[RMDB]
RNA sequence: GGGAACGACUCGAGUAGAGUCGAAAAAGCACGGUUUUUGAGGACGCAUUUUGUCCGUGCCGUAAUGCCCUCCUUUACACUUUCUCGCAUGGUGCGGGAGUGUGGAGAGGAAACAAAAGCUAGUCUCGAUAGGCGGUUAACUUCGGUUAACCGCCAAGUCUUAUUACUUGUUCGCAAGUAAUAAGACAAAAGAAACAACAACAACAAC
Reactivity to 2A3 in 0.01 (KOAc 150mM, MgCl2 10mM, bicine 150mM(pH8.5), 24C), signal-to-noise 8, nucleotides 027 to 156: a000g010c000a000c000g000g010u010u000u010u010u010g090a110g010g030a020c040g030c120a170u010u000u000u010g010u000c000c000g000u000g000c010c020g130u120a030a050u190g030c000c000c010u040c010c010u020u070u050a010c000a000c010u060u170u040c020u020c010g030c020a110u250g300g020u300g180c010g000g010g000a010g000u010g000u010g000g000a040g000a020g020g030a020a030a010c010a000a000a000a010g060c020u080a030g010u010c010u000c050g070a120u120a150g010g000c000g000g000u000u000a000a010c010u030u040c170g030g000u000u000a000a000c000c000g010c000c000a000a000
Reactivity to DMS in 0.01 (KOAc 150mM, MgCl2 10mM, bicine 150mM(pH8.5), 24C), signal-to-noise 3, nucleotides 027 to 156: a030g010c010a030c000g020g010u000u000u000u000u000g000a050g010g010a030c020g010c100a170u020u000u000u010g030u000c000c000g030u000g020c010c010g020u000a080a100u000g020c000c010c010u000c040c010u000u000u000a060c000a030c010u000u000u000c010u000c010g010c020a300u010g050g020u000g030c010g020g010g010a010g010u000g020u000g000g010a030g000a050g010g000a130a040a040c020a020a040a040a060g010c060u000a120g010u000c000u010c080g010a190u010a140g010g020c000g020g000u000u000a000a020c020u000u000c300g030g000u010u000a000a000c000c000g030c000c000a000a010